Background:
The record gives the reactivity of an RNA of 177 nucleotides to 2A3 and DMS. The data come from the RNA Mapping Database (RMDB), library RFM100. The 2A3 profile rests on 578 reads.
RNA sequence: GGGAACGACUCGAGUAGAGUCGAAAAAGCUAGCCACCAUACUACGGUAUGGUGGCUAGCAAUAUGGUGAUGAUCUUCACGGUACCCUGAGAGACCCUCGAUGAUGAGCCCCCUCUCAACUGACCAAUCAUCUGCUGAAGUUCGCUUCAGCAGAUGAAAAAGAAACAACAACAACAAC
Reactivity to 2A3 in 0.01 (KOAc 150mM, MgCl2 10mM, bicine 150mM(pH8.5), 24C), signal-to-noise 1, nucleotides 027 to 126: a000g020c000u030a020g020c000c000a000c000c000a000u000a000c020u030a010c150g070g020u000a010u000g000g020u000g000g000c000u000a000g020c000a000a000u010a010u050g000g000u010g060a020u050g040a050u000c040u120u070c060a000c050g040g000u110a120c010c000c000u020g050a070g000a000g020a090c000c000c000u080c060g210a230u280g020a080u080g020a020g010c020c000c000c030c000u020c000u020c000a020a060c050u000g040a040c010c010a000a080
Reactivity to DMS in 0.01 (KOAc 150mM, MgCl2 10mM, bicine 150mM(pH8.5), 24C), signal-to-noise 1, nucleotides 027 to 126: a030g000c020u040a000g020c020c000a000c000c000a000u060a040c000u010a120c150g060g050u000a000u000g020g080u000g000g000c000u000a000g030c000a010a000u040a080u000g000g000u030g000a050u000g000a110u040c170u010u000c090a160c030g010g010u000a100c000c020c010u050g000a040g000a090g080a130c030c150c000u000c050g000a080u000g000a070u070g020a060g000c000c010c040c000c040u010c010u030c030a030a110c050u000g000a030c080c000a150a070